An RNA of 207 nucleotides, treated with DMS and 2A3 and read out base by base. The reactions ran in a buffer of 150 mM KOAc, 10 mM MgCl2 and 150 mM bicine (pH 8.5), at 24 C.
[RMDB]
RNA sequence: GGGAACGACUCGAGUAGAGUCGAAAAAUACAUUCCUGUGCCGGCAAUACAGUGUGUAGGGAGGUCUCAAUGGCUCGGAAGUGCCAGCAAACCGGCGUAGAUAUUAGCAGACGUAUGGGCGUAAGACAAAAGAGAAUGAUGUUCGCAUCAUUCUCAACAUAAAAUUUGACUUCGGUCAAAUUUUAUGAAAAGAAACAACAACAACAAC
Reactivity to DMS in 0.01 (KOAc 150mM, MgCl2 10mM, bicine 150mM(pH8.5), 24C), signal-to-noise 2, nucleotides 027 to 156: a160u000a090c060a060u010u020c200c050u000g030u000g040c030c020g010g030c050a070a120u000a070c010a120g000u000g010u010g020u000a090g000g000g000a110g010g000u010c040u000c070a030a170u010g000g090c010u010c020g030g020a130a090g000u010g030c030c020a070g000c050a050a080a070c020c030g020g010c020g010u010a070g010a120u000a060u010u000a070g040c020a100g000a070c070g030u000a080u000g010g000g000c030g000u000a050a080g080a120c010a030a060a100a200g000a040g020a040a050u000g000a020u000g000u000u020c300g010c000a030u010c000a010u000u000c000u000c000a010a070
Reactivity to 2A3 in 0.01 (KOAc 150mM, MgCl2 10mM, bicine 150mM(pH8.5), 24C), signal-to-noise 3, nucleotides 027 to 156: a010u090a020c050a040u060u050c010c000u020g010u040g040c030c020g080g000c060a070a090u150a120c060a090g060u050g000u010g010u150a040g030g010g010a040g000g050u020c050u030c070a100a130u080g020g000c000u010c040g090g050a070a050g010u030g000c020c000a010g020c010a060a070a060c050c030g020g000c010g000u020a040g030a070u070a030u140u130a070g010c040a000g030a060c040g060u100a080u100g010g030g000c030g010u040a030a020g040a020c030a050a110a020a010g000a000g000a000a000u000g000a000u000g000u000u070c140g010c070a000u010c000a000u000u010c000u000c000a000a000

The DMS profile rests on 3,727 reads. For 2A3, 1,662 sequencing reads were counted. For DMS the reverse transcriptase was MarathonRT. It was measured as part of the RMDB library M2RFPK. Values cover nucleotides 27 to 156.